[RMDB]
RNA sequence: GGGAACGACUCGAGUAGAGUCGAAAAUGCUUUGAGGGGCUUGCUCCGUUCUGCUUUACAAUUAACAACUAAUUUAGAACUGUGACGAUCACGGGGAAUCCAACUGUUUAAUUAAAACAAAGCAUUGCAAACGUCAGAAUUUCGAUUCUGACGUUUGAAAAGAAACAACAACAACAAC
Reactivity to 2A3 in 0.01 (KOAc 150mM, MgCl2 10mM, bicine 150mM(pH8.5), 24C), signal-to-noise 6, nucleotides 027 to 126: u010g000c000u030u020u060g050a130g030g040g020g010c010u060u120g070c000u020c010c000g020u040u030c050u040g090c000u030u050u040a040c080a100a070u090u080a150a060c100a050a030c070u160a080a160u110u070u100a080g040a070a040c020u050g030u050g070a050c050g070a060u120c060a010c020g030g010g000g000a000a030u010c010c010a030a070c080u030g060u090u120u070a100a130u060u050a060a060a030a010c010a000a000a000g010c000a010u030u080g000
Reactivity to DMS in 0.01 (KOAc 150mM, MgCl2 10mM, bicine 150mM(pH8.5), 24C), signal-to-noise 4, nucleotides 027 to 126: u010g000c000u000u000u010g020a110g020g010g020g000c060u000u010g000c030u000c020c010g020u010u020c050u030g010c060u000u000u020a050c160a040a050u030u020a060a090c160a050a090c110u020a050a080u020u010u020a060g000a130a120c080u000g010u000g000a100c130g010a080u010c090a020c050g000g000g000g040a070a040u040c030c040a040a110c100u010g010u020u010u010a070a060u030u020a080a090a050a220c020a020a020a010g000c030a010u010u020g000